An RNA of 177 nucleotides, treated with 2A3 and DMS and read out base by base.
RNA sequence: GGGAACGACUCGAGUAGAGUCGAAAAGAAGAGAGGAAGAUUUAGGGGAAGAAGAUAACAAUAUUCACGCGGUCUUCCCGGUUACGUGUGUAGACACGAUGAUUGUUAUCAAAACUAAAUAUGAGAAACGCACCUAGUGAUUCGUCACUAGGUGCGUAAAAGAAACAACAACAACAAC
Reactivity to 2A3 in 0.01 (KOAc 150mM, MgCl2 10mM, bicine 150mM(pH8.5), 24C), signal-to-noise 2, nucleotides 027 to 126: g030a090a010g070a000g000a000g070g010a120a020g030a090u090u000u000a050g000g040g100g000a080a000g070a040a000g000a070u050a010a000c020a010a060u050a110u190u100c050a020c050g100c040g000g000u000c000u000u020c000c000c000g040g000u140u210a060c020g000u030g020u000g000u090a000g040a060c020a030c080g010a020u080g000a000u000u020g000u000u000a020u000c000a010a060a040a030c040u150a060a070a040u300a140u210g040a020g110a100a180
Reactivity to DMS in 0.01 (KOAc 150mM, MgCl2 10mM, bicine 150mM(pH8.5), 24C), signal-to-noise 2, nucleotides 027 to 126: g000a000a070g000a070g000a060g030g010a070a130g000a040u000u000u000a030g000g060g000g000a060a100g000a110a130g020a050u000a020a020c050a050a030u030a140u010u010c100a090c050g010c030g010g020u000c000u000u000c030c020c030g000g010u070u060a020c000g050u020g000u040g020u000a000g000a080c010a150c100g040a130u000g010a060u020u000g000u000u020a020u000c000a060a060a000a120c130u000a060a050a030u010a060u020g000a100g010a080a040
The reactions ran in a buffer of 150 mM KOAc, 10 mM MgCl2 and 150 mM bicine (pH 8.5), at 24 C.